An RNA of 177 nucleotides, treated with 2A3 and DMS and read out base by base. Conditions: 150 mM KOAc, 10 mM MgCl2 and 150 mM bicine (pH 8.5), 24 C. The DMS profile rests on 693 reads. For DMS the reverse transcriptase was MarathonRT. In probing experiments dimethyl sulfate is read out at A N1 and C N3, which are open when not base-paired. For 2A3 the reverse transcriptase was SuperScript II with manganese.
[RMDB]
RNA sequence: GGGAACGACUCGAGUAGAGUCGAAAAUAAUAUCUUGAAUGGUAAAGAUCAGUCAAGUCGACGUGAUGUUGUCUUACUAAAUGCGGGUUUAAGCCUUUAUGUUGCAGAGAAAGUGGAUACCAUCGCACGUUCCCCUCACAUUCGUGUGAGGGGAACGAAAAGAAACAACAACAACAAC
Reactivity to 2A3 in 0.01 (KOAc 150mM, MgCl2 10mM, bicine 150mM(pH8.5), 24C), signal-to-noise 1, nucleotides 027 to 126: u080a000a020u040a110u000c040u010u010g040a050a050u110g050g010u140a220a180a130g250a170u030c000a000g070u000c010a000a070g020u040c040g020a040c090g050u020g010a020u010g020u020u000g000u000c030u090u260a000c010u030a000a020a020u050g000c110g030g020g080u130u250u160a100a010g080c010c010u050u230u020a280u300g280u230u040g040c020a000g000a010g030a100a180a000g030u000g000g030a000u000a010c000c000a000u000c000g060c000a000
Reactivity to DMS in 0.01 (KOAc 150mM, MgCl2 10mM, bicine 150mM(pH8.5), 24C), signal-to-noise 1, nucleotides 027 to 126: u000a090a050u010a120u000c000u010u020g000a040a010u010g000g020u000a120a150a190g020a030u000c070a020g020u000c020a010a080g000u010c160g030a070c170g040u020g020a050u000g000u000u000g020u000c030u000u000a070c070u000a110a120a110u000g010c050g020g020g010u020u000u020a190a120g000c010c000u000u020u000a050u050g000u000u020g030c050a050g020a020g010a040a230a120g020u000g020g060a010u000a020c030c040a000u020c000g010c050a190